[RMDB]
RNA sequence: GGGAACGACUCGAGUAGAGUCGAAAAGUAUCCCUAGAUGAUAAAACACCGCACAUGGCUCGUAGGAGCGGUUAAAUUAGCAAGUAAUGCAAAUUACGCGAGGUAACGCAUGGCCUAGGCUCGUUAGAAAAGGGAGAAUCCUUCGGGAUUCUCCCAAUCAUAGGAACAGCUUCGGCUGUUCCUAUGAAAAAGAAACAACAACAACAAC
Reactivity to DMS in 0.01 (KOAc 150mM, MgCl2 10mM, bicine 150mM(pH8.5), 24C), signal-to-noise 1, nucleotides 027 to 156: g040u000a080u000c000c000c010u010a190g000a130u000g000a130u000a110a090a160a170c040a080c000c010g000c000a140c040a090u000g020g030c020u010c030g040u010a130g030g010a100g000c010g010g020u000u000a030a070a130u000u000a070g060c020a050a080g000u010a060a060u010g040c170a020a040a050u000u000a020c070g030c020g020a070g010g000u000a070a080c060g000c060a060u000g020g000c000c030u090a140g050g020c010u010c020g010u000u000a090g000a040a050a150a280g010g000g030a030g020a050a080u000c000c010u000u010c300g060g060g020a040u020u000c010u010c000c000c000a000a010
Reactivity to 2A3 in 0.01 (KOAc 150mM, MgCl2 10mM, bicine 150mM(pH8.5), 24C), signal-to-noise 1, nucleotides 027 to 156: g050u020a050u040c010c010c000u030a030g110a200u090g000a050u140a050a070a010a020c030a000c000c000g060c000a040c020a100u120g040g000c000u080c030g050u030a060g040g140a010g010c040g020g000u110u110a090a110a060u080u070a030g080c080a170a040g050u180a090a050u140g040c040a040a030a290u170u070a040c050g000c000g060a050g000g140u070a020a020c030g000c040a060u030g070g010c000c010u000a000g000g050c030u040c040g010u060u060a040g150a140a180a030a090g020g010g010a020g020a000a000u010c010c020u030u090c180g020g000g000a000u000u000c000u000c000c000c000a000a000